[RMDB]
RNA sequence: GGGAACGACUCGAGUAGAGUCGAAAAUAUGUUAUUUGUAUAUGACUUGUAAAAUAUCGUCACUUAUUAUGUAAAUUUUCAGUGUGAAAUGGCAGGUUUGCAAUAAAUUGUUUAACAAAAUGAUGCAAUUCAAGACGGUAUUCGUACCGUCUUGAAUAAAAGAAACAACAACAACAAC
Reactivity to DMS in 0.01 (KOAc 150mM, MgCl2 10mM, bicine 150mM(pH8.5), 24C), signal-to-noise 3, nucleotides 027 to 126: u040a090u030g010u000u010a040u010u010u020g020u000a060u070a060u050g010a000c010u020u030g000u020a080a070a090a090u020a060u020c030g010u000c010a050c010u000u000a060u000u000a030u000g030u020a040a090a060u010u010u010u030c120a030g020u000g000u000g020a010a080a010u010g010g000c000a020g000g000u010u010u000g000c020a030a030u010a040a050a130u010u000g000u000u070u010a120a060c070a060a000a050a060u030g030a090u000g020c080a070
Reactivity to 2A3 in 0.01 (KOAc 150mM, MgCl2 10mM, bicine 150mM(pH8.5), 24C), signal-to-noise 3, nucleotides 027 to 126: u290a090u140g080u190u010a120u010u090u090g090u040a180u010a090u200g040a000c000u010u030g160u160a050a140a080a000u150a060u060c000g180u160c000a000c010u060u020a000u040u020a030u150g120u140a040a270a200u010u090u020u000c000a000g030u000g000u000g000a020a070a070u030g020g000c000a000g050g000u090u060u070g000c040a000a010u060a070a080a010u100u060g060u040u080u050a070a050c070a010a110a000a000u100g100a110u120g110c110a020